[RMDB]
RNA sequence: GGGAACGACUCGAGUAGAGUCGAAAAACGGAUAGAUUCGUCUAUCCGUGCAUCUCUUAACAGACAGAGAAAGUCUGCUAAGAUCUCACUUAGAUAAAGAGAAGAGAGUCGAGUUCGCUCGACUCAAGCCAAUUUCGAUAUUCGUAUCGAAAUUGGCAAAAGAAACAACAACAACAAC
Reactivity to DMS in 0.01 (KOAc 150mM, MgCl2 10mM, bicine 150mM(pH8.5), 24C), signal-to-noise 1, nucleotides 027 to 126: a000c010g000g000a000u000a000g010a040u010u010c200g030u010c000u000a010u000c000c000g020u000g000c160a130u010c070u000c000u010u010a110a100c000a010g000a000c000a060g010a220g010a100a210a110g000u010c000u000g010c010u040a000a000g000a040u000c020u000c020a120c030u010u010a110g010a210u000a050a020a070g000a060g000a040a180g000a200g010a020g040u000c000g000a050g000u000u010c170g040c000u000c010g000a010c000u000c000a010a040
Reactivity to 2A3 in 0.01 (KOAc 150mM, MgCl2 10mM, bicine 150mM(pH8.5), 24C), signal-to-noise 1, nucleotides 027 to 126: a000c000g010g010a010u000a000g010a010u020u060c220g050u030c140u000a000u020c000c000g000u000g000c020a090u020c020u000c000u030u000a040a020c010a010g010a020c000a000g200a010g120a300a120a000g030u000c000u020g000c000u000a010a010g010a030u030c020u000c030a070c030u050u110a000g040a100u180a190a140a010g060a030g000a150a050g120a000g000a000g060u000c000g000a000g000u030u020c140g010c080u010c020g020a000c000u000c000a000a000

Annotation:
The data come from the RNA Mapping Database (RMDB), library M2PK50. Chemical mapping of a 177-nucleotide RNA with DMS and 2A3. 2A3 adducts were read by reverse transcription with SuperScript II with manganese. For DMS the reverse transcriptase was MarathonRT. The reactions ran in a buffer of 150 mM KOAc, 10 mM MgCl2 and 150 mM bicine (pH 8.5), at 24 C.